[RMDB]
Conditions: 150 mM KOAc, 10 mM MgCl2 and 150 mM bicine (pH 8.5), 24 C. An RNA of 177 nucleotides, treated with DMS and 2A3 and read out base by base. The 2A3 profile rests on 1,095 reads.

RNA sequence: GGGAACGACUCGAGUAGAGUCGAAAAACUACGUAUCCGGUCUACGGACCGGAUACGUAGAACUAAGGCUUUCUAGUAUUCCCCCCUUAUGUUGAUGCGGACCUUUCAGGUGCGCAUUUUUUUAUAAACUUUAGACGUUAUUCGUAACGUCUAAAGUAAAAGAAACAACAACAACAAC
Reactivity to DMS in 0.01 (KOAc 150mM, MgCl2 10mM, bicine 150mM(pH8.5), 24C), signal-to-noise 2, nucleotides 027 to 126: a130c010u000a040c010g010u000a000u000c000c020g020g000u000c000u000a140c150g040g000a000c000c000g020g000a000u000a000c000g030u000a010g000a020a050c040u000a190a220g010g000c070u000u000u000c030u010a030g010u010a300u000u000c000c000c010c010c010c020u000u000a030u030g010u030u000g000a020u000g000c000g020g000a000c000c000u000u010u010c240a050g030g030u000g000c000g000c010a000u000u000u000u020u000u010u000a080u010a080a080
Reactivity to 2A3 in 0.01 (KOAc 150mM, MgCl2 10mM, bicine 150mM(pH8.5), 24C), signal-to-noise 2, nucleotides 027 to 126: a010c000u010a000c000g020u020a010u060c000c020g020g000u030c020u020a130c290g070g000a000c000c000g000g000a000u000a000c000g000u000a000g000a000a000c000u010a050a000g020g020c020u080u170u030c010u010a030g040u010a090u000u010c000c000c000c010c020c000u000u130a060u250g070u050u080g030a020u020g020c030g070g060a010c030c000u140u300u210c220a030g000g000u030g010c000g010c000a000u000u000u020u000u010u010u040a120u050a010a140

Annotation:
Source: RMDB libraries RFM100 and RFMREP, as collected in RNAgym.